[RMDB]
RNA sequence: GGGAACGACUCGAGUAGAGUCGAAAAGUCUGUGCGUUUCCAUUUGAGUAUCCUGAAAACGGGCUUUUCAACAUGGAACGUACAUAUUAAAUAGUAGGAGUGCAUAGUGGCCCGUAUAGCAGGCAUUGAGGCGAGGAUUGUUUCGACAAUCCUCGAAAGAUCGCAGAAUAUUCGUAUUCUGCGAUCUAAAAGAAACAACAACAACAAC
Reactivity to DMS in 0.01 (KOAc 150mM, MgCl2 10mM, bicine 150mM(pH8.5), 24C), signal-to-noise 1, nucleotides 027 to 156: g000u010c070u020g000u000g000c010g030u000u000u000c000c000a050u010u020u010g000a050g030u010a070u000c010c050u000g010a040a070a160a280c060g000g000g020c150u000u000u020u020c020a020a030c130a060u000g000g010a050a060c010g020u020a030c000a040u000a030u000u000a050a090a160u010a170g010u000a050g030g000a080g000u010g010c050a110u000a060g000u000g010g040c000c000c010g040u000a070u000a100g030c030a050g000g010c060a080u010u000g020a100g000g040c020g000a060g020g010a040u000u000g000u000u000u010c210g030a150c020a010a030u000c000c030u000c020g010a030a050
Reactivity to 2A3 in 0.01 (KOAc 150mM, MgCl2 10mM, bicine 150mM(pH8.5), 24C), signal-to-noise 2, nucleotides 027 to 156: g070u020c030u030g000u010g000c000g000u030u200u040c020c010a000u020u000u000g020a010g040u090a110u140c010c040u050g110a050a060a070a140c120g000g000g000c040u040u060u050u030c010a020a000c020a120u010g000g000a000a000c000g000u000a010c000a000u020a000u010u100a020a040a050u080a030g080u010a020g000g070a040g010u060g040c020a040u030a110g080u100g050g020c000c010c070g050u030a010u050a100g050c070a030g000g000c040a050u010u130g060a060g020g110c020g000a010g010g000a000u010u000g030u010u090u050c040g000a000c000a010a000u020c000c000u000c000g000a010a000
Source: RMDB library M2RFPK, as collected in RNAgym. Chemical mapping of a 207-nucleotide RNA with DMS and 2A3. For 2A3 the reverse transcriptase was SuperScript II with manganese. The DMS profile rests on 2,540 reads. For 2A3, 1,328 sequencing reads were counted. The reactions ran in a buffer of 150 mM KOAc, 10 mM MgCl2 and 150 mM bicine (pH 8.5), at 24 C.